This 177-nucleotide RNA was probed chemically with 2A3 and DMS.
RNA sequence: GGGAACGACUCGAGUAGAGUCGAAAAAAGCGAAGGCGUUCUCGUGGGUGUUUGUACCAUAGGAGAGCAUCCUGUGGCUUUGGCUGUGAUGGAUUUCAGUUUUAUGGCAGGCUCUAUGGGUGCGGUGUCAGGAGAAAUAGUUCGCUAUUUCUCCUGAAAAAGAAACAACAACAACAAC
Reactivity to 2A3 in 0.01 (KOAc 150mM, MgCl2 10mM, bicine 150mM(pH8.5), 24C), signal-to-noise 3, nucleotides 027 to 126: a000a000g110c060g050a060a010g040g000c010g020u050u020c010u000c020g030u060g010g030g010u070g070u100u140u130g100u170a080c010c020a030u050a030g080g040a070g010a020g040c030a020u030c000c010u050g010u030g040g000c000u100u080u110g040g000c020u000g010u050g080a060u070g070g070a080u090u140u140c050a050g050u030u030u040u160a060u070g050g000c030a020g040g000c010u010c020u070a050u080g030g020g010u040g030c050g000g040u060g040
Reactivity to DMS in 0.01 (KOAc 150mM, MgCl2 10mM, bicine 150mM(pH8.5), 24C), signal-to-noise 7, nucleotides 027 to 126: a060a040g010c040g000a110a070g010g010c180g010u000u000c020u000c030g030u000g000g010g010u000g000u010u000u000g020u000a090c020c010a050u000a050g010g010a070g010a160g010c110a070u000c000c010u000g010u000g010g010c070u010u000u000g020g010c020u000g010u000g010a060u000g010g000a120u010u010u010c110a090g010u000u000u010u000a070u010g000g020c040a080g000g000c020u000c040u000a070u000g000g010g020u000g000c030g010g010u000g010
The 2A3 profile rests on 3,747 reads. Conditions: 150 mM KOAc, 10 mM MgCl2 and 150 mM bicine (pH 8.5), 24 C. For 2A3 the reverse transcriptase was SuperScript II with manganese.